[RMDB]
Chemical mapping of a 177-nucleotide RNA with 2A3 and DMS. For DMS the reverse transcriptase was MarathonRT. The data come from the RNA Mapping Database (RMDB), library OK2TRN.

RNA sequence: GGGAACGACUCGAGUAGAGUCGAAAACUGCAAAUCUACUUCUUGAAGAAUCUGAAGAUGAGGUAGGAGCACUUCUGGCUGAUUCAAUUGAGAAUAGCAUGAGAACAGUGUUAUCAACUGUUGCUGACGCAUUAGGACCAUUCGUGGUCCUAAUGCGAAAAGAAACAACAACAACAAC
Reactivity to 2A3 in 0.01 (KOAc 150mM, MgCl2 10mM, bicine 150mM(pH8.5), 24C), signal-to-noise 1, nucleotides 027 to 126: c030u060g050c030a000a000a160u010c010u010a020c020u060u030c030u020u070g030a130a040g050a100a110u080c060u190g040a100a060g050a170u100g010a000g060g020u020a010g030g120a010g000c000a010c000u020u000c000u060g070g000c000u010g070a070u060u000c010a100a200u170u300g080a100g010a080a040u050a020g010c050a020u070g120a040g000a090a000c020a020g000u000g090u150u100a100u210c050a050a010c010u000g000u000u050g030c070u090g020a040
Reactivity to DMS in 0.01 (KOAc 150mM, MgCl2 10mM, bicine 150mM(pH8.5), 24C), signal-to-noise 2, nucleotides 027 to 126: c060u010g000c080a150a140a100u010c020u000a090c070u000u000c030u000u000g020a120a190g000a050a120u000c080u010g010a120a150g010a070u000g020a030g020g000u010a030g000g000a200g010c100a030c050u000u000c000u000g030g030c030u000g020a020u000u000c020a090a050u000u000g020a080g000a050a070u000a020g000c140a050u010g000a110g000a020a010c030a020g010u000g020u020u030a090u000c180a080a080c060u000g000u000u000g000c080u000g020a220